[RMDB]
The record gives the reactivity of an RNA of 177 nucleotides to DMS and 2A3. High 2A3 reactivity points to a flexible backbone, as in loops and unpaired stretches. It was measured as part of the RMDB libraries RFM100 and RFMREP. For 2A3 the reverse transcriptase was SuperScript II with manganese.

RNA sequence: GGGAACGACUCGAGUAGAGUCGAAAACUUAACGGCCUGCCAACCCUGGAAUCGGUUCAGCCGGAGGUAGGGUCCAGCGGUCGGAAGAGCACCGCACGUCGCGCGGUGUCCGGUGCGCCCCCGGCGGAUUGACAACGUCAUUCGUGACGUUGUCAAUAAAAGAAACAACAACAACAAC
Reactivity to DMS in 0.01 (KOAc 150mM, MgCl2 10mM, bicine 150mM(pH8.5), 24C), signal-to-noise 4, nucleotides 027 to 126: c030u010u000a060a210c030g000g000c000c000u010g010c020c170a140a110c020c010c010u020g000g020a090a120u010c040g010g010u020u020c190a160g010c010c010g000g000a080g010g000u030a030g010g020g020u000c090c140a120g010c000g000g020u020c010g000g010a100a090g010a150g010c010a030c010c000g010c100a050c060g010u020c110g000c070g020c040g000g020u000g000u030c060c040g030g000u000g000c040g010c000c020c020c020c040g010g020c130g010g000
Reactivity to 2A3 in 0.01 (KOAc 150mM, MgCl2 10mM, bicine 150mM(pH8.5), 24C), signal-to-noise 4, nucleotides 027 to 126: c020u060u070a080a040c020g020g020c000c010u070g020c010c020a040a060c020c000c010u040g100g130a070a060u060c020g020g040u150u160c090a100g070c010c000g030g000a030g060g080u140a040g010g000g030u040c030c020a020g000c020g020g020u020c010g010g000a090a040g030a000g040c010a000c020c000g000c020a030c050g210u160c060g020c020g000c030g070g000u000g010u000c000c010g030g000u060g030c020g020c000c010c010c000c000g040g030c010g040g040